[RMDB]
The record gives the reactivity of an RNA of 177 nucleotides to DMS and 2A3. 2A3 is a SHAPE reagent: it acylates the 2'-hydroxyl of flexible nucleotides of all four kinds. The RNA was probed in 150 mM KOAc, 10 mM MgCl2 and 150 mM bicine (pH 8.5) at 24 C.
RNA sequence: GGGAACGACUCGAGUAGAGUCGAAAAGAUAUGGACUCGCAUGGGAGCGGUAUCGGAAACGAUACGCGAAGAACAUGUCGAGUCCUAAGUCAAAAGUAUGACACCUAGUUCGCUAGGUGUCAUACAAGUAGUUUAGAUUCUUCGGAAUCUAAACUACAAAAGAAACAACAACAACAAC
Reactivity to DMS in 0.01 (KOAc 150mM, MgCl2 10mM, bicine 150mM(pH8.5), 24C), signal-to-noise 6, nucleotides 027 to 126: g010a030u000a300u000g000g000a020c010u000c000g000c000a000u000g000g010g010a200g010c020g010g010u010a000u000c000g010g010a090a070a150c000g000a020u000a000c000g010c000g010a070a090g010a180a170c000a000u000g010u020c020g010a020g010u000c000c000u000a010a050g000u000c030a070a080a110a150g010u010a000u000g000a010c000a010c000c010u000a000g010u010u010c240g010c000u000a000g010g010u000g000u000c010a000u000a000c000a050a090
Reactivity to 2A3 in 0.01 (KOAc 150mM, MgCl2 10mM, bicine 150mM(pH8.5), 24C), signal-to-noise 7, nucleotides 027 to 126: g020a000u060a050u140g010g000a000c000u000c000g000c010a010u010g020g020g040a040g030c060g040g050u030a010u010c010g030g000a050a050a030c030g000a000u020a020c130g010c010g270a220a060g030a050a010c010a000u050g180u300c060g000a000g000u000c000c000u000a000a000g010u000c020a000a000a020a130g010u000a000u000g000a000c000a000c000c000u010a010g020u050u080c300g010c180u000a000g010g000u000g000u010c000a000u000a000c000a000a000
For DMS the reverse transcriptase was MarathonRT. For DMS, 10,210 sequencing reads were counted.